[RMDB]
RNA sequence: GGGAACGACUCGAGUAGAGUCGAAAACAGCACUUUGAUCAUUUGCUAAAUAACCGCCAUCUUUACCUCGUAUUGUGUCAAUCAUUUUUAAAUCGACAAGUUGAGUCGUCACGCGUCGUAAUUGAACACCCUCCUCAAGUUUCGACUUGAGGAGGGUAAAAGAAACAACAACAACAAC
Reactivity to DMS in 0.01 (KOAc 150mM, MgCl2 10mM, bicine 150mM(pH8.5), 24C), signal-to-noise 2, nucleotides 027 to 126: c220a050g020c060a030c050u000u000u010g000a020u030c060a050u000u000u000g010c000u010a090a130a090u010a060a100c090c010g030c120c030a000u020c040u000u000u000a060c000c000u000c070g040u020a010u000u040g010u000g000u030c010a150a120u020c120a000u010u000u010u010u070a050a040a160u030c020g010a000c090a030a100g030u000u050g000a040g010u000c000g000u010c000a040c090g000c080g000u010c020g000u020a130a140u000u010g000a070a120c290
Reactivity to 2A3 in 0.01 (KOAc 150mM, MgCl2 10mM, bicine 150mM(pH8.5), 24C), signal-to-noise 4, nucleotides 027 to 126: c020a000g030c020a000c070u100u120u220g020a050u100c070a130u000u060u050g030c040u090a030a210a160u090a110a060c010c010g040c030c040a020u030c040u010u050u060a020c000c020u020c010g000u060a030u040u220g090u040g030u030c010a010a060u010c050a110u040u020u010u090u280a080a140a110u070c020g020a060c050a080a060g070u030u070g090a030g010u050c020g000u000c040a010c090g110c020g050u040c000g010u020a100a070u040u080g030a040a030c020
Notes:
The data come from the RNA Mapping Database (RMDB), library OK1LIB. Structure probing data (DMS and 2A3) for a 177-nucleotide construct. As a SHAPE reagent, 2A3 marks flexible, mostly unpaired nucleotides at the ribose 2'-OH. The DMS profile rests on 1,993 reads. Values cover nucleotides 27 to 126. For 2A3, 1,944 sequencing reads were counted. DMS adducts were read by reverse transcription with MarathonRT.